The record gives the reactivity of an RNA of 177 nucleotides to 2A3 and DMS. The RNA was probed in 150 mM KOAc, 10 mM MgCl2 and 150 mM bicine (pH 8.5) at 24 C. Values cover nucleotides 27 to 126. DMS adducts were read by reverse transcription with MarathonRT. DMS (dimethyl sulfate) methylates the pairing face of unpaired adenines and cytosines.
RNA sequence: GGGAACGACUCGAGUAGAGUCGAAAAGCAACUCGGUUCGCCGAGUUGCAAAUAAAAUCAGCGGUAAAUUCGAGGCGUAUAUUACCGCUGAACGCCUCGAUAAAAGUCUUCAGUUCGCUGAAGACAAGUUUUAAGCCAAGUUCGCUUGGCUUAAAACAAAAGAAACAACAACAACAAC
Reactivity to 2A3 in 0.01 (KOAc 150mM, MgCl2 10mM, bicine 150mM(pH8.5), 24C), signal-to-noise 1, nucleotides 027 to 126: g000c010a010a000c000u000c010g020g070u050u100c190g010c040c000g000a000g000u000u010g000c010a010a000a000u030a000a000a000a040u050c020a010g010c010g040g060u030a070a150a160u100u040c040g010a040g080g040c040g030u000a090u000a010u110u080a050c000c000g000c010u000g010a000a000c010g000c000c020u010c010g010a010u150a090a120a020a030g010u010c000u000u010c010a030g050u020u060c170g040c040u000g010a000a000g000a000c000a000a030
Reactivity to DMS in 0.01 (KOAc 150mM, MgCl2 10mM, bicine 150mM(pH8.5), 24C), signal-to-noise 2, nucleotides 027 to 126: g000c010a000a040c000u000c000g000g010u000u010c300g070c010c020g010a020g040u030u000g000c020a000a030a050u000a070a010a080a090u010c100a010g000c000g010g000u010a060a060a160u000u000c030g000a050g000g020c090g010u010a120u000a070u000u000a070c030c010g010c000u010g010a000a030c050g010c010c000u000c050g020a070u010a040a110a100a110g000u010c000u000u000c000a010g000u000u030c170g030c010u010g000a010a000g000a020c020a030a060